[RMDB]
RNA sequence: GGGAACGACUCGAGUAGAGUCGAAAAAAAAAUAAAUAGAGAUGUUAAGUUAACAUCAAUUCAAACUUUAGAAGAUGUGAAAGGAUGGAAUGAAAAUGACUAAGAGUGCUUUAGUAACAGGUGCAUCAUGUAAUGACAGGUUCGCCUGUCAUUACAUAAAAGAAACAACAACAACAAC
Reactivity to DMS in 0.01 (KOAc 150mM, MgCl2 10mM, bicine 150mM(pH8.5), 24C), signal-to-noise 1, nucleotides 027 to 126: a030a050a080a080a050u000a060a070a130u030a130g000a260g000a010u000g000u000u000a040a100g010u020u010a010a040c030a040u000c000a080a100u010u000c080a060a020a110c080u000u000u010a060g020a110a090g000a040u010g010u010g000a020a040a030g000g010a100u000g000g030a040a020u000g010a040a060a060a050u010g020a050c050u010a030a090g000a150g010u010g000c060u000u000u010a040g010u000a060a030c080a040g020g020u000g000c020a070u020c130